An RNA of 177 nucleotides, treated with DMS and 2A3 and read out base by base. For 2A3 the reverse transcriptase was SuperScript II with manganese. It was measured as part of the RMDB library OK1LIB. DMS adducts were read by reverse transcription with MarathonRT.
[RMDB]
RNA sequence: GGGAACGACUCGAGUAGAGUCGAAAAGACGCAACGUUGUCCGCUUUCGUUGCUCAAUCAAUCUGCGUUUUGGUAUGAGUAACACUACAGACGGAAUGUAGUUUCCGAGUUAAGCGCAGGAAAGAAAGGGAAUACAUAUGUUCGCAUAUGUAUUCCCAAAAGAAACAACAACAACAAC
Reactivity to DMS in 0.01 (KOAc 150mM, MgCl2 10mM, bicine 150mM(pH8.5), 24C), signal-to-noise 6, nucleotides 027 to 126: g010a050c080g010c070a070a030c070g010u010u020g020u000c040c030g020c090u010u000u040c110g000u000u000g020c020u000c010a050a060u000c060a030a070u030c010u000g000c030g010u000u000u010u000g000g040u010a100u010g010a070g000u000a020a030c070a200c180u020a080c120a060g000a150c070g000g000a080a060u020g010u020a030g010u010u000u000c020c000g020a150g010u050u020a060a030g000c010g010c010a030g010g020a100a110a110g010a060a070a180
Reactivity to 2A3 in 0.01 (KOAc 150mM, MgCl2 10mM, bicine 150mM(pH8.5), 24C), signal-to-noise 9, nucleotides 027 to 126: g060a010c080g010c070a090a030c070g060u070u070g080u070c030c020g030c080u040u130u120c080g000u000u010g000c010u020c010a020a040u050c000a000a010u040c010u020g010c010g010u000u020u040u080g070g020u110a240u140g030a050g040u080a050a020c030a030c120u120a040c050a080g100a040c060g080g070a070a040u080g030u070a090g030u020u030u030c020c010g050a040g060u070u140a050a020g000c000g000c020a010g040g070a040a100a020g160a050a070a050